[RMDB]
RNA sequence: GGGAACGACUCGAGUAGAGUCGAAAAUGAGACAAACACGCUUCACAAUGUGCGGCAAAGAAACAUUGUUUAUGCAAAGGCACUUCGCAAUGUGUGCUCAAACAUUGCUUAUUCAAUCACGCUUCACAAAAGAAUCAGUGGUUCGCCACUGAUUCAACGCAGUGACUUACUUCGGUAAGUCACUGCGAAAAGAAACAACAACAACAAC
Reactivity to 2A3 in 0.01 (KOAc 150mM, MgCl2 10mM, bicine 150mM(pH8.5), 24C), signal-to-noise 1, nucleotides 027 to 156: u160g030a050g060a040c140a000a180a000c080a000c150g060c060u030u000c000a020c060a000a040u000g010u020g000c000g070g000c000a040a150a180g080a130a060a020c000a000u000u000g100u000u070u100a140u090g050c010a080a140a080g130g000c000a000c010u020u080c020g030c040a010a040u050g000u000g000u000g040c090u130c180a000a020a000c000a000u000u040g010c000u060u110a140u230u140c010a000a000u040c010a050c110g040c140u130u180c050a030c070a130a130a100a000g000a030a000u000c000a000g000u000g030g090u050u020c160g100c110c020a000c000u000g000a030u000u000c000a000a000
The record gives the reactivity of an RNA of 207 nucleotides to 2A3. For 2A3, 523 sequencing reads were counted. Conditions: 150 mM KOAc, 10 mM MgCl2 and 150 mM bicine (pH 8.5), 24 C. For 2A3 the reverse transcriptase was SuperScript II with manganese. Source: RMDB library M2RFPK, as collected in RNAgym.